[RMDB]
RNA sequence: GGGAACGACUCGAGUAGAGUCGAAAAUGGCUGAGGAGGUGCUCCACGGUCUCUACCUCCCCCUUGCCCACCCCCUCUGUCUCGACGUGGAGCUUCACAUAGCCUAUCAUCGCUGGGAGCCUGCUCCUAGCUUGUUUGAAUUCGUUCAAACAAGCUAAAAAGAAACAACAACAACAAC
Reactivity to DMS in 0.01 (KOAc 150mM, MgCl2 10mM, bicine 150mM(pH8.5), 24C), signal-to-noise 9, nucleotides 027 to 126: u010g000g020c040u000g010a110g010g010a070g020g000u000g010c020u000c010c010a030c020g020g000u010c030u010c150u000a240c040c010u000c010c000c010c010c110u000u010g010c030c020c040a300c030c010c010c010c020u010c060u000g010u000c060u000c080g010a080c040g010u000g000g010a040g000c020u000u010c050a070c080a100u000a050g010c010c020u000a090u000c090a080u000c070g010c040u000g010g010g000a050g010c030c060u010g020c040u000c010c020
Reactivity to 2A3 in 0.01 (KOAc 150mM, MgCl2 10mM, bicine 150mM(pH8.5), 24C), signal-to-noise 3, nucleotides 027 to 126: u100g000g000c050u050g010a080g060g070a050g020g070u060g020c000u000c010c000a010c020g120g070u060c050u030c040u120a110c000c010u000c000c000c000c010c020u030u100g060c010c010c010a080c010c010c000c020c010u030c040u060g100u010c040u030c100g090a060c000g010u000g000g010a000g000c000u080u040c020a060c020a050u110a020g010c000c010u050a060u130c040a010u090c020g040c070u030g000g000g020a010g000c010c050u070g020c010u020c000c000
Conditions: 150 mM KOAc, 10 mM MgCl2 and 150 mM bicine (pH 8.5), 24 C. An RNA of 177 nucleotides, treated with DMS and 2A3 and read out base by base. The DMS profile rests on 24,938 reads. DMS adducts were read by reverse transcription with MarathonRT. The data come from the RNA Mapping Database (RMDB), library OK2TRN.